[RMDB]
RNA sequence: GGGAACGACUCGAGUAGAGUCGAAAAACGUGAUGAAAAGACACAGGUGACACUGAUCCGGAUUUGGUAGUUGACAAAUCCUCCAUGCCGAGAUUAGUUUCAUUUUGCGUCUUUUGAAUUCGAAUAGAAAUAAGGGUUACUUCGGUAACCCUUAUUUAAAAGAAACAACAACAACAAC
Reactivity to 2A3 in 0.01 (KOAc 150mM, MgCl2 10mM, bicine 150mM(pH8.5), 24C), signal-to-noise 3, nucleotides 027 to 126: a010c080g060u050g070a110u080g030a060a000a000a010g000a000c000a000c000a020g030g020u000g010a000c000a000c020u010g000a010u000c000c020g060g080a260u010u000u010g040g040u220a030g010u030u130g070a040c080a030a160a060u100c010c000u000c000c000a020u070g030c000c000g230a280g000a130u000u010a000g000u000u000u010c000a010u000u130u240u030g000c020g000u000c000u010u000u010u020g020a010a020u070u020c020g050a050a080u060a150g120
Reactivity to DMS in 0.01 (KOAc 150mM, MgCl2 10mM, bicine 150mM(pH8.5), 24C), signal-to-noise 5, nucleotides 027 to 126: a090c080g010u020g010a060u010g010a030a010a010a000g010a010c000a030c010a020g010g020u000g000a020c040a010c010u000g000a000u000c000c010g000g000a090u020u000u000g000g010u030a020g000u020u020g010a170c300a070a090a070u010c100c010u000c010c000a020u000g010c010c000g000a110g000a000u000u000a010g000u010u010u000c020a000u000u000u050u000g030c060g020u000c000u000u000u000u000g000a090a090u000u000c020g010a070a090u020a110g010